Structure probing data (DMS) for a 177-nucleotide construct.
[RMDB]
RNA sequence: GGGAACGACUCGAGUAGAGUCGAAAAGGGGCAUCAGCAGCUCAAGCGAUUGCUAAUGCCGCAGAAGCCUGGGUUAUUGCUCGCAAUAGAGGUGUGUUGGAUAUGGCUUCUCUAUUGUUCUGGAGUAACAGAGUUUGACAUUCGUGUCAAACUCUGUAAAAGAAACAACAACAACAAC
Reactivity to DMS in 0.01 (KOAc 150mM, MgCl2 10mM, bicine 150mM(pH8.5), 24C), signal-to-noise 1, nucleotides 027 to 126: g000g020g000g020c010a020u000c060a010g020c010a070g000c130u000c110a120a140g050c080g000a110u010u010g040c000u000a030a040u010g000c000c040g000c030a050g000a140a160g000c060c020u020g000g000g020u000u010a090u000u000g020c020u000c020g000c020a020a040u000a030g010a020g000g000u000g000u010g020u020u000g030g010a150u010a200u010g040g000c000u000u000c020u000c020u000a040u000u000g000u000u000c090u010g010g000a080g090u000a040
DMS (dimethyl sulfate) methylates the pairing face of unpaired adenines and cytosines.
It was measured as part of the RMDB library OK2TST.
For DMS, 1,222 sequencing reads were counted.